This 177-nucleotide RNA was probed chemically with 2A3. Conditions: 150 mM KOAc, 10 mM MgCl2 and 150 mM bicine (pH 8.5), 24 C. Values are in units of 0.01, from 0 to 300, in steps of 10. Reactivities are given for positions 27 through 126.

RNA sequence: GGGAACGACUCGAGUAGAGUCGAAAAGCGAGAUCCAGCUGGAGUCCACAGCUAAGACCUCACCGUCGCUAGCACAGCCGGCAAAUGGCAUUAAGGAGGAGCCCGGAUCCGACUACCUCUGCAGUCGCCAUCGACGAUGCUUCGGCAUCGUCGAUGGAAAAGAAACAACAACAACAAC
Reactivity to 2A3 in 0.01 (KOAc 150mM, MgCl2 10mM, bicine 150mM(pH8.5), 24C), signal-to-noise 1, nucleotides 027 to 126: g080c050g060a040g000a060u020c000c000a060g000c000u050g010g020a050g240u080c110c010a120c010a000g000c000u020a020a020g010a100c000c000u020c030a090c010c000g020u050c000g020c060u040a050g010c090a040c010a030g030c010c000g080g000c040a000a000a300u250g050g000c000a000u030u300a150a070g010g030a000g070g000a000g000c000c010c000g000g000a020u020c020c020g000a010c030u090a090c000c000u050c010u000g000c010a010g000u010c000g000